[RMDB]
RNA sequence: GGGAACGACUCGAGUAGAGUCGAAAACAGAAGCUAAUGUAUCAGGAAAUUAUUACAUGCAUGUUUAUUUUGGAAAACAGAUUGAAUCAUCAAAGACAUGGGAUUUACCGUAUUUCCAAUGGGUGAAGAACGGAGGUCUUUUCGAAGACCUCCGUUCAAAAGAAACAACAACAACAAC
Reactivity to 2A3 in 0.01 (KOAc 150mM, MgCl2 10mM, bicine 150mM(pH8.5), 24C), signal-to-noise 1, nucleotides 027 to 126: c000a070g300a160a100g000c120u040a010a040u050g000u100a090u010c080a100g050g170a030a030a030u220u130a160u060u160a090c070a020u100g080c090a000u080g170u000u080u180a160u070u120u000u000g000g000a080a010a000a000c030a000g120a150u140u160g020a030a030u000c090a000u060c000a140a000a150g130a020c020a060u020g000g000g000a000u000u010u010a020c010c000g000u030a140u000u000u020c000c000a010a000u100g060g000g000u100g010a160a130
Reactivity to DMS in 0.01 (KOAc 150mM, MgCl2 10mM, bicine 150mM(pH8.5), 24C), signal-to-noise 1, nucleotides 027 to 126: c060a090g020a110a130g000c090u000a080a030u000g000u010a060u000c090a040g030g000a040a120a050u000u020a060u010u020a040c090a020u000g000c160a030u000g000u000u000u060a090u000u000u060u000g110g030a000a000a000a060c140a110g000a090u000u090g010a010a000u000c050a060u000c040a120a150a140g000a220c300a150u020g000g030g000a020u000u030u000a030c120c040g000u000a020u000u000u000c000c000a040a010u020g000g000g000u020g000a160a120
Conditions: 150 mM KOAc, 10 mM MgCl2 and 150 mM bicine (pH 8.5), 24 C. An RNA of 177 nucleotides, treated with 2A3 and DMS and read out base by base.